[RMDB]
RNA sequence: GGGAACGACUCGAGUAGAGUCGAAAAGAUAUGGACCCACGUGGUGAGCGAAGAACAUUGUCGGAAACGACAAUGGGAGCUCCCAUGGGUCCUAAGUCAAACGCUCAAAUCUUCGGAUUUGAGCGAACGUUGGAAUACCGUUCGCGGUAUUCCAACGAAAAGAAACAACAACAACAAC
Reactivity to 2A3 in 0.01 (KOAc 150mM, MgCl2 10mM, bicine 150mM(pH8.5), 24C), signal-to-noise 1, nucleotides 027 to 126: g000a010u040a000u060g010g000a020c000c030c010a040c080g120u140g020g200u300g030a010g000c000g300a300a020g000a020a020c000a010u010u010g000u000c010g000g060a030a000a000c010g000a000c000a020a000u000g000g000g000a000g000c000u050c000c000c020a000u000g020g000g000u010c000c000u010a020a000g000u000c020a030a160a190c010g010c000u000c010a000a040a010u040c000u050u130c300g220g000a010u000u020u030g000a000g020c010g000a010a010
Reactivity to DMS in 0.01 (KOAc 150mM, MgCl2 10mM, bicine 150mM(pH8.5), 24C), signal-to-noise 1, nucleotides 027 to 126: g010a030u000a140u010g020g000a020c000c000c000a020c190g020u010g000g030u020g070a010g070c000g010a110a170g000a100a250c010a000u000u000g000u000c000g000g000a040a030a080c000g000a000c030a000a000u000g000g000g000a020g000c010u000c010c000c000a020u000g070g000g000u000c000c000u000a000a040g000u010c000a170a120a250c020g010c000u000c000a010a000a000u000c000u000u010c300g000g010a000u000u000u000g000a000g010c000g000a000a010